[RMDB]
RNA sequence: GGGAACGACUCGAGUAGAGUCGAAAAGCCGCAUGGUUUAAGGUAUAGGUCUGGGUGAGUUAAUUUUACAUAUAUGCGGCCUCACCGGGGCAGUAGACCUAUCCUUGAUCUCUAAUAUAUCUGCCCCCUAUAUAUGUAUAUUCGUAUACAUAUAUAGAAAAGAAACAACAACAACAAC
Reactivity to 2A3 in 0.01 (KOAc 150mM, MgCl2 10mM, bicine 150mM(pH8.5), 24C), signal-to-noise 9, nucleotides 027 to 126: g000c000c000g000c040a060u100g120g140u160u230u240a060a030g010g000u150a010u000a020g000g000u000c030u040g060g010g000u000g020a010g010u060u120a070a160u090u120u120u230a080c060a020u160a000u030a010u130g010c000g000g000c000c010u000c000a000c000c000g000g000g000g000c000a000g000u030a000g000a000c000c000u000a000u010c000c000u020u110g080a130u010c030u000c030u140a180a130u120a090u010a080u150c000u000g000c000c000c000c000
Reactivity to DMS in 0.01 (KOAc 150mM, MgCl2 10mM, bicine 150mM(pH8.5), 24C), signal-to-noise 6, nucleotides 027 to 126: g010c000c000g020c020a020u010g010g010u020u020u030a050a020g010g000u050a010u000a000g000g010u000c000u000g000g000g020u000g000a020g000u050u030a060a040u020u020u030u050a110c110a110u030a100u040a050u000g000c000g010g000c020c020u000c000a000c000c020g010g000g010g040c000a010g010u010a020g010a010c000c000u000a000u000c010c000u000u010g010a060u020c090u030c100u030a100a100u040a100u020a060u020c000u000g000c000c000c000c120